[RMDB]
RNA sequence: GGGAACGACUCGAGUAGAGUCGAAAAGAAUUGGUAUGUAAGCUACUUCUCCCAGUAGCUGCGUCAUAACAUCAAGGUUAUGCAUACUGAGCCGAAGCUCAGCUUCGGUCCUCCAAGGAAGACCAAAUACAGCUCAGCCCGUUCGCGGGCUGAGCAACACGAGAUGUAUGUUCGCAUACAUCUCGUGAAAAGAAACAACAACAACAAC
Reactivity to DMS in 0.01 (KOAc 150mM, MgCl2 10mM, bicine 150mM(pH8.5), 24C), signal-to-noise 2, nucleotides 027 to 156: g020a080a060u010u020g020g020u000a000u000g000u000a300a300g010c000u000a000c010u000u000c030u000c050c000c020a290g060u000a000g000c010u010g000c050g000u000c000a030u010a000a030c010a300u000c200a230a140g010g010u000u000a010u000g000c030a010u000a020c000u000g010a070g020c000c000g030a030a030g020c000u000c230a150g000c010u010u000c000g000g020u050c010c040u000c060c080a060a110g040g010a080a180g000a100c100c000a080a100a140u000a110c080a100g010c020u000c010a000g010c000c000c020g030u000u010c300g000c030g120g010g000c030u000g000a000g040c000a030a060
Reactivity to 2A3 in 0.01 (KOAc 150mM, MgCl2 10mM, bicine 150mM(pH8.5), 24C), signal-to-noise 3, nucleotides 027 to 156: g080a020a090u030u020g000g000u010a000u000g000u000a000a020g000c000u000a000c010u100u080c030u020c020c000c010a000g000u000a000g000c010u000g000c010g000u010c000a000u000a000a020c020a100u230c210a140a110g300g010u000u010a010u030g010c000a000u000a000c000u010g000a000g000c000c010g020a010a000g000c040u110c300a050g000c010u030u000c000g000g000u000c000c010u080c030c030a050a050g050g020a060a060g060a080c060c090a100a050a020u220a140c080a040g000c000u000c000a010g000c000c000c000g060u070u090c180g020c020g060g000g000c010u000g000a000g000c010a000a000

Structure probing data (DMS and 2A3) for a 207-nucleotide construct. For DMS the reverse transcriptase was MarathonRT. Source: RMDB library M2RFPK, as collected in RNAgym. The 2A3 profile rests on 2,542 reads. The reactions ran in a buffer of 150 mM KOAc, 10 mM MgCl2 and 150 mM bicine (pH 8.5), at 24 C.